Chemical mapping of a 170-nucleotide RNA with 2A3 and DMS.

RNA sequence: GGGAACGACUCGAGUAGAGUCGAAAACCUCCUUGCAAAUUCUUGAUUGCGGGACCAAAAGGACCUGAAAUCCGAUAUCUCUAUUUUGUUAAAAAUCUUAACAACCUUCAUCGCGGGCAAGUGUUAGUCAGAAGGUGGUUCGCCACCUUCAAAAGAAACAACAACAACAAC
Reactivity to 2A3 in 0.01 (KOAc 150mM, MgCl2 10mM, bicine 150mM(pH8.5), 24C), signal-to-noise 6, nucleotides 027 to 129: c000c000u020c010c010u040u220g010c010a010a030a160u200u060c080u090u170g100a070u010u100g020c010g020g010g000a000c000c010a000a060a030a130g030g010a020c010c060u150g030a030a040a020u010c010c000g030a030u040a050u090c010u000c020u030a190u130u170u020u050g030u020u040a050a040a020a030a040u090c040u000u030a000a010c030a020a060c010c010u070u090c070a130u060c040g030c030g030g050g000c010a000a000g010u040g040u130u070a040g030u040c070a030
Reactivity to DMS in 0.01 (KOAc 150mM, MgCl2 10mM, bicine 150mM(pH8.5), 24C), signal-to-noise 5, nucleotides 027 to 129: c070c030u020c040c040u030u110g050c040a060a040a050u030u020c120u050u060g000a080u000u000g010c020g030g040g010a110c080c080a050a140a120a210g010g070a040c010c010u000g050a000a090a080u040c050c050g000a090u030a100u010c100u020c040u050a050u010u000u000u000g050u000u000a000a040a010a170a070u000c100u060u000a020a030c050a060a090c100c030u000u070c070a060u030c080g060c000g030g040g000c040a000a000g020u020g030u040u020a110g040u040c100a000

The reactions ran in a buffer of 150 mM KOAc, 10 mM MgCl2 and 150 mM bicine (pH 8.5), at 24 C. It was measured as part of the RMDB library 15KLIB. The 2A3 profile rests on 9,323 reads.